About this RNA
The record gives the reactivity of an RNA of 177 nucleotides to DMS and 2A3.

RNA sequence: GGGAACGACUCGAGUAGAGUCGAAAAGGCGAGGCCGUUGAGCUAGCCAGCGAGACGCUGAUGAAGCGCGAACUGACGAGCUUUGUGGUGCUGGUUCCCCAGGGAACCCCCGACGUUCAGUUGCGCCGUAUUCUGUCGAGUUCGCUCGACAGAAUACAAAAGAAACAACAACAACAAC
Reactivity to DMS in 0.01 (KOAc 150mM, MgCl2 10mM, bicine 150mM(pH8.5), 24C), signal-to-noise 2, nucleotides 027 to 126: g020g010c040g000a090g010g000c020c020g010u010u000g010a070g010c010u000a090g060c010c030a060g000c030g000a250g000a160c060g070c020u010g000a120u070g000a170a060g000c000g050c030g000a270a060c030u010g000a000c000g020a140g020c090u020u000u020g030u000g000g020u020g030c170u000g000g000u030u000c000c010c000c050a190g010g000g020a050a040c000c000c000c010c000g010a100c110g000u020u000c150a110g000u000u010g000c010g000c130c060
Reactivity to 2A3 in 0.01 (KOAc 150mM, MgCl2 10mM, bicine 150mM(pH8.5), 24C), signal-to-noise 4, nucleotides 027 to 126: g060g020c030g030a060g030g030c020c010g050u020u150g020a050g020c010u030a020g010c000c020a010g000c020g030a090g010a090c050g010c060u080g030a100u230g100a130a000g000c020g000c010g070a020a020c000u000g000a000c000g060a040g060c060u030u130u120g110u170g040g040u100g050c080u040g020g010u010u010c010c000c010c010a210g100g000g000a020a010c010c000c000c000c010g050a040c020g080u040u100c020a030g010u040u030g040c010g000c050c020

The reactions ran in a buffer of 150 mM KOAc, 10 mM MgCl2 and 150 mM bicine (pH 8.5), at 24 C.